[RMDB]
RNA sequence: GGGAACGACUCGAGUAGAGUCGAAAACCACAGCCGUUGAUGAGCAUGGCCGUUCUUAGGUGUAAGCCCUGCCGGUUGUCUUGAUAGACAAAAUUUUACCGAGACUUGUAAUAGCCAAAAGCAGGCAAGUGUAGUUACUGUUCGCAGUAACUACACUAAAAGAAACAACAACAACAAC
Reactivity to DMS in 0.01 (KOAc 150mM, MgCl2 10mM, bicine 150mM(pH8.5), 24C), signal-to-noise 5, nucleotides 027 to 126: c010c000a170c180a100g010c010c010g010u000u010g000a130u010g010a090g010c080a060u010g000g010c020c030g020u000u000c050u010u010a090g010g020u020g000u000a050a100g010c090c010c010u000g000c010c030g010g010u010u000g020u000c000u000u000g020a110u020a050g000a050c160a050a060a090a150u010u020u030u000a100c030c020g000a070g010a040c040u010u000g010u010a050a070u030a090g010c060c090a070a050a090a180g000c030a010g000g000c040a080
Reactivity to 2A3 in 0.01 (KOAc 150mM, MgCl2 10mM, bicine 150mM(pH8.5), 24C), signal-to-noise 7, nucleotides 027 to 126: c010c000a020c020a050g030c020c030g090u080u110g100a190u070g040a030g050c030a030u040g030g000c010c020g050u060u040c030u070u120a100g030g010u040g020u100a040a070g040c000c000c000u020g000c010c010g010g020u020u040g010u030c010u000u140g110a110u080a080g010a010c000a020a120a070a100u080u170u110u100a050c020c010g020a040g030a100c010u040u040g050u090a070a070u050a130g010c020c020a050a050a010a040g070c050a030g020g040c030a030

An RNA of 177 nucleotides, treated with DMS and 2A3 and read out base by base. It was measured as part of the RMDB libraries RFM100 and RFMREP. 2A3 adducts were read by reverse transcription with SuperScript II with manganese. Values are in units of 0.01, from 0 to 300, in steps of 10. DMS adducts were read by reverse transcription with MarathonRT. High 2A3 reactivity points to a flexible backbone, as in loops and unpaired stretches.